[RMDB]
Annotation:
Structure probing data (2A3) for a 207-nucleotide construct. For 2A3 the reverse transcriptase was SuperScript II with manganese.

RNA sequence: GGGAACGACUCGAGUAGAGUCGAAAAUGGUUUAUCAAGGAUGGAAGUGGAUGAGUUAAUGCCAGCUGUAGGCCCUGAUGAGAGCCUUUCUCAAUUAGUAGCAAAGAAACUCAUCAGCUUGAAUGUAUCAACUGAGGAGUAUUCAGCUGAGGUGUCACUGUGUUGAAGACUUCGGUCUUCAACACAGAAAAGAAACAACAACAACAAC
Reactivity to 2A3 in 0.01 (KOAc 150mM, MgCl2 10mM, bicine 150mM(pH8.5), 24C), signal-to-noise 1, nucleotides 027 to 156: u020g030g020u050u090u110a090u070c080a120a050g050g030a040u030g000g030a040a050g010u050g020g030a010u030g020a030g070u040u120a090a050u050g070c040c010a020g000c120u190g050u020a030g000g010c000c000c030u070g030a040u130g000a020g000a010g040c010c000u020u060u000c050u000c020a000a090u040u030a090g050u070a010g020c050a000a000a190g010a040a020a000c000u050c000a010u040c000a010g000c080u000u020g000a030a010u200g050u220a160u090c020a010a010c000u030g000a040g000g000a000g020u070a260u000u010c040a000g030c010u040g030a000g040g040u070g000u070c050a020